[RMDB]
RNA sequence: GGGAACGACUCGAGUAGAGUCGAAAAGAACAGUUCGCUGUUCGUCCGGGGGUCAUUCUCGUUGAUCUUGUCAGCUGACGCUGAAGCCUCCACGGCGUUUAGCUUGGAUUUAGGGAGAGAAUGACGGAGGCACCCUCUUAAACACGUUCGCGUGUAACGUAUAACUCAUUUUCGAAUGAGUUAUACGAAAAGAAACAACAACAACAAC
Reactivity to DMS in 0.01 (KOAc 150mM, MgCl2 10mM, bicine 150mM(pH8.5), 24C), signal-to-noise 4, nucleotides 027 to 156: g010a020a040c000a040g030u010u000c280g050c010u000g010u000u000c000g000u000c030c040g030g000g010g040g020u010c020a030u000u000c010u000c010g030u000u010g010a070u000c060u010u000g010u000c070a120g010c000u000g000a040c020g010c010u000g000a070a100g000c010c010u010c010c030a300c030g010g000c000g020u000u000u010a020g040c020u000u000g040g010a140u000u000u010a120g000g000g010a160g010a040g010a060a030u000g030a040c010g030g030a040g060g030c020a140c040c020c040u000c030u000u000a080a170a080c010a010c010g020u000u000c220g020c030g020u000g000u000a060a200
Reactivity to 2A3 in 0.01 (KOAc 150mM, MgCl2 10mM, bicine 150mM(pH8.5), 24C), signal-to-noise 9, nucleotides 027 to 156: g000a000a000c010a010g040u100u130c170g060c120u000g010u000u010c010g010u040c030c010g030g010g010g040g020u010c000a010u020u000c000u000c010g160u130u210g130a210u110c070u150u270g210u230c020a000g000c000u000g000a000c010g000c010u020g040a110a030g030c000c000u000c000c000a020c010g000g010c000g010u030u080u300a010g000c010u040u160g150g030a180u160u160u300a100g020g030g020a080g000a000g000a040a000u000g000a000c010g000g000a000g010g000c000a010c010c000c000u080c030u080u230a100a190a010c010a000c010g060u100u090c230g020c010g160u020g010u030a060a040